[RMDB]
RNA sequence: GGGAACGACUCGAGUAGAGUCGAAAAUGACAAAGAUCAAGAUGUUGGACAUUUUUGCUUGAGUCCAAGGUGUAACACAAUUAGAUACCCUAUCAGUCCGCGACAUAUCAACUCAUGUAAAUGGCAAAUUAGCUCAUAUAUUCGUAUAUGAGCUAAUAAAAGAAACAACAACAACAAC
Reactivity to 2A3 in 0.01 (KOAc 150mM, MgCl2 10mM, bicine 150mM(pH8.5), 24C), signal-to-noise 8, nucleotides 027 to 126: u080g010a010c030a020a170a030g070a110u110c030a050a040g050a110u120g050u130u060g050g020a030c020a060u040u050u040u090u120g020c030u030u060g040a020g020u000c010c010a000a010g070g000u080g010u060a090a010c050a000c020a100a060u050u030a050g030a070u070a080c010c000c000u010a050u080c010a010g040u000c000c020g030c000g030a010c010a010u090a010u080c020a020a050c020u000c050a000u050g010u090a060a140a060u040g050g010c030a020a040
Reactivity to DMS in 0.01 (KOAc 150mM, MgCl2 10mM, bicine 150mM(pH8.5), 24C), signal-to-noise 9, nucleotides 027 to 126: u010g010a100c060a070a100a080g010a110u010c110a080a090g000a080u010g010u000u000g000g010a140c040a050u000u000u000u010u000g010c050u000u010g000a120g010u000c020c080a060a060g010g010u000g010u000a060a070c090a070c110a080a090u010u010a090g000a120u000a070c030c010c020u000a070u010c070a070g010u000c020c040g020c120g010a050c060a030u000a060u000c070a040a080c070u000c050a040u010g010u010a040a060a090u010g000g010c130a060a070